[RMDB]
RNA sequence: GGGAACGACUCGAGUAGAGUCGAAAAGUGAGAACGUUCGCGUUCUCACAAAUACUAAGACCGAAGCUUAGAUGGCCGACACUUCGCUUGGAAACGGCACAAAAAUGAUAGGUUUCGACCUAUCAAAGAUAAAAUUAUAGUUCGCUAUAAUUUUAUCAAAAGAAACAACAACAACAAC
Reactivity to 2A3 in 0.01 (KOAc 150mM, MgCl2 10mM, bicine 150mM(pH8.5), 24C), signal-to-noise 2, nucleotides 027 to 126: g000u000g010a010g000a040a000c000g010u020u050c130g000c000g130u000u010c010u000c000a010c010a000a000a000u050a010c020u050a050a000g020a060c060c100g150a110a000g020c010u060u070a040g020a120u110g110g000c020c010g060a010c020a010c050u080u080c030g070c100u040u090g080g020a070a180a040c020g030g000c020a010c020a110a070a040a040a030u080g000a000u000a000g010g030u010u030u110c120g060a010c000c000u000a000u000c020a000a000a000
Reactivity to DMS in 0.01 (KOAc 150mM, MgCl2 10mM, bicine 150mM(pH8.5), 24C), signal-to-noise 2, nucleotides 027 to 126: g000u000g000a000g000a010a010c000g040u010u020c230g040c010g030u000u000c010u000c000a000c000a020a090a070u000a090c060u010a040a070g000a110c040c030g000a090a070g020c040u000u000a040g010a150u000g000g000c040c020g000a170c170a070c060u000u000c090g010c100u000u000g030g000a060a040a170c040g010g010c060a090c150a020a040a060a080a060u000g000a000u010a020g010g010u000u000u020c210g020a030c000c000u000a000u000c000a040a080a090